[RMDB]
RNA sequence: GGGAACGACUCGAGUAGAGUCGAAAAUGGGACUGUGAGCAUAAACAUUACUAUGUGAAGUUUGCCACGGAUGCAGAGAGAUAUAGUGCUACGGGAGUAUGGGAGGUUGUGUAUAACAAUGAGACCAUUUCAUCUUGCGAUCCUGUUACUAGCACUAGAUCUCCAUUAGGUUCGCCUAAUGGAGAUCAAAAGAAACAACAACAACAAC
Reactivity to DMS in 0.01 (KOAc 150mM, MgCl2 10mM, bicine 150mM(pH8.5), 24C), signal-to-noise 2, nucleotides 027 to 156: u000g020g050g010a130c020u000g020u010g000a140g040c060a100u000a090a070a110c030a110u000u000a100c120u010a070u000g040u010g000a130a220g000u000u010u000g000c000c020a090c050g010g020a060u010g000c000a090g000a140g000a120g030a100u000a120u000a030g000u010g000c000u000a060c100g010g000g000a080g030u000a020u000g000g010g020a160g030g040u000u000g000u020g020u000a130u000a110a050c050a070a060u000g020a200g040a090c070c110a080u020u000u000c040a080u010c090u020u010g010c070g000a160u000c040c010u010g030u010u010a060c090u000a060g000c030a050c020u010a060
Reactivity to 2A3 in 0.01 (KOAc 150mM, MgCl2 10mM, bicine 150mM(pH8.5), 24C), signal-to-noise 5, nucleotides 027 to 156: u050g010g020g050a020c000u020g010u030g030a060g010c030a030u110a110a160a020c010a030u140u240a110c100u170a110u180g030u020g030a070a090g060u040u110u030g020c000c000a010c040g040g000a070u170g000c030a020g030a010g000a000g040a070u040a040u030a240g040u040g000c000u010a010c020g020g030g000a040g060u100a040u080g040g020g010a070g030g030u040u040g020u050g050u030a110u100a300a050c040a030a060u160g000a070g050a100c000c020a050u010u050u100c080a120u040c060u090u190g040c050g070a100u030c000c020u010g020u040u080a100c060u040a050g000c020a000c000u020a040